[RMDB]
RNA sequence: GGGAACGACUCGAGUAGAGUCGAAAACUCUCGCGCCAGGAAAUGAUGGCAACCACGUCAUCGCCCUGCACCAGCGCAUGGGCGCGGCCUUCCUUCAUGUUCAUCAUGAGGUCGUCGUAGGCAAGUAAUCCCCUGCAGCAUUCGUGCUGCAGGGGAUAAAAGAAACAACAACAACAAC
Reactivity to DMS in 0.01 (KOAc 150mM, MgCl2 10mM, bicine 150mM(pH8.5), 24C), signal-to-noise 2, nucleotides 027 to 126: c070u010c030u000c030g000c060g010c020c020a140g000g000a090a090a070u000g020a010u010g010g010c020a030a130c190c290a140c190g000u000c000a000u000c000g040c040c000c010u010g000c100a100c040c120a120g020c140g000c080a070u000g020g020g030c050g020c050g000g000c030c050u000u000c080c000u000u000c010a020u000g000u000u030c240a120u000c010a010u000g000a040g010g010u000c150g000u000c100g000u040a080g000g000c060a060a100g000u000a090
Reactivity to 2A3 in 0.01 (KOAc 150mM, MgCl2 10mM, bicine 150mM(pH8.5), 24C), signal-to-noise 1, nucleotides 027 to 126: c020u040c020u020c030g070c050g000c050c010a050g040g070a050a060a120u180g030a010u020g000g000c030a080a120c090c050a130c100g030u020c010a020u010c000g020c030c010c030u010g040c030a140c040c100a050g010c080g000c110a130u200g030g000g000c020g000c000g000g010c010c070u130u080c000c020u090u080c010a000u010g020u090u200c030a230u060c010a010u120g010a000g020g000u040c020g000u000c030g010u010a040g040g030c010a060a000g010u050a100
The record gives the reactivity of an RNA of 177 nucleotides to DMS and 2A3. DMS (dimethyl sulfate) methylates the pairing face of unpaired adenines and cytosines. The RNA was probed in 150 mM KOAc, 10 mM MgCl2 and 150 mM bicine (pH 8.5) at 24 C.